[RMDB]
RNA sequence: GGGAACGACUCGAGUAGAGUCGAAAAGAUAUGGAGUUGUAGACAUGAGCGUCAUUCGGAAACGAAUGACAGCUCAACAGCUACACCUCCUAAGUCAAAUCGAACGGGUCUUCGGACCCGUUCGAAACUAAGGACGGAUGUUCGCAUCCGUCCUUAGAAAAGAAACAACAACAACAAC
Reactivity to DMS in 0.01 (KOAc 150mM, MgCl2 10mM, bicine 150mM(pH8.5), 24C), signal-to-noise 1, nucleotides 027 to 126: g000a010u000a050u020g000g000a030g010u000u000g000u000a000g000a040c040a300u020g010a010g010c000g010u000c000a010u000u000c000g020g000a020a010a040c000g000a010a010u000g010a010c000a040g040c000u020c010a060a030c130a150g010c010u000a010c000a010c050c000u000c000c000u000a000a120g010u000c000a070a130a120u000c000g010a010a030c040g010g000g010u000c000u000u000c180g020g000a040c000c000c010g020u000u000c000g000a000a020a150
Reactivity to 2A3 in 0.01 (KOAc 150mM, MgCl2 10mM, bicine 150mM(pH8.5), 24C), signal-to-noise 1, nucleotides 027 to 126: g020a020u020a030u060g000g030a000g020u000u030g020u030a010g040a080c160a300u300g050a060g000c000g010u000c000a020u030u010c000g000g010a000a010a020c010g000a000a000u020g000a000c020a010g020c000u000c010a000a000c070a000g000c010u000a000c010a020c000c010u050c030c000u000a030a010g010u020c060a050a000a220u060c000g020a000a000c040g010g090g000u020c070u210u200c300g090g010a000c050c000c000g000u020u000c000g000a010a000a010
An RNA of 177 nucleotides, treated with DMS and 2A3 and read out base by base. Values cover nucleotides 27 to 126. The data come from the RNA Mapping Database (RMDB), library TTRDEL. The reactions ran in a buffer of 150 mM KOAc, 10 mM MgCl2 and 150 mM bicine (pH 8.5), at 24 C.